[RMDB]
RNA sequence: GGGAACGACUCGAGUAGAGUCGAAAAGUGUGAGAAGUUUAGACCUAAGUACGACACGUUUGAUAACAGAACUUUCUGGUUGGAGUCGAUAAUAAACGCAGCGGAAAGUACGAUGAGACUGCUGUACGGACGAAGUAAGUUUCGACUUACUUCGUCCAAAAGAAACAACAACAACAAC
Reactivity to 2A3 in 0.01 (KOAc 150mM, MgCl2 10mM, bicine 150mM(pH8.5), 24C), signal-to-noise 1, nucleotides 027 to 126: g040u030g010u000g000a120g020a040a120g030u040u040u210a040g020a010c000c000u030a060a030g020u040a040c000g040a000c030a000c020g010u030u100u160g120a130u100a100a000c000a040g030a050a050c010u010u140u000c030u070g090g000u070u010g040g040a090g010u040c020g060a040u080a190a050u070a050a210a000c020g000c040a020g000c000g000g000a030a020a000g000u010a070c040g090a170u070g010a030g000a020c020u040g100c000u020g040u030a010c040
Reactivity to DMS in 0.01 (KOAc 150mM, MgCl2 10mM, bicine 150mM(pH8.5), 24C), signal-to-noise 2, nucleotides 027 to 126: g000u000g000u000g010a100g010a070a120g010u010u010u000a080g000a100c110c060u020a040a170g010u000a050c090g020a030c060a030c100g010u010u000u000g000a110u000a130a060c080a050g010a130a050c030u000u000u000c020u000g000g020u000u000g000g010a130g040u010c030g000a100u010a070a070u010a020a050a110c090g000c060a020g010c030g000g000a040a040a040g010u000a050c100g000a110u000g010a070g010a030c020u000g000c010u000g000u020a090c100